[RMDB]
RNA sequence: GGGAACGACUCGAGUAGAGUCGAAAAGAUAUGGACUUGCAUGUGAGCGAGAGAUCGGAAACGAUGGAAUGCUCCAUGGCAAGUCCUAAGUCAAAGCAACUGAACGGCUUCGGCCGUUCAGUUGCAAGUACAUGUGUAACUUCGGUUACACAUGUACAAAAGAAACAACAACAACAAC
Reactivity to DMS in 0.01 (KOAc 150mM, MgCl2 10mM, bicine 150mM(pH8.5), 24C), signal-to-noise 3, nucleotides 027 to 126: g000a050u010a300u010g000g010a030c000u000u000g020c010a010u000g000u020g040a000g030c000g000a080g000a300g000a010u000c000g020g000a150a090a180c000g010a020u010g010g000a270a140u010g000c000u000c000c000a020u000g020g000c000a000a010g000u010c000c000u000a000a060g010u000c060a080a090a150g020c000a000a010c010u000g000a010a020c000g000g000c030u000u020c250g020g020c000c000g000u000u000c000a010g000u010u000g010c010a010a010
Reactivity to 2A3 in 0.01 (KOAc 150mM, MgCl2 10mM, bicine 150mM(pH8.5), 24C), signal-to-noise 2, nucleotides 027 to 126: g040a030u100a060u170g030g000a000c000u000u000g000c010a000u020g210u190g100a010g010c030g000a110g010a010g030a110u020c010g010g030a110a040a010c010g000a000u040g030g080a080a010u060g000c000u010c000c000a000u030g070g090c010a010a010g010u000c000c000u000a020a000g010u010c020a000a090a070g000c000a000a010c010u010g000a010a000c000g030g000c030u160u160c300g160g000c050c020g000u000u000c000a010g000u000u000g000c020a010a000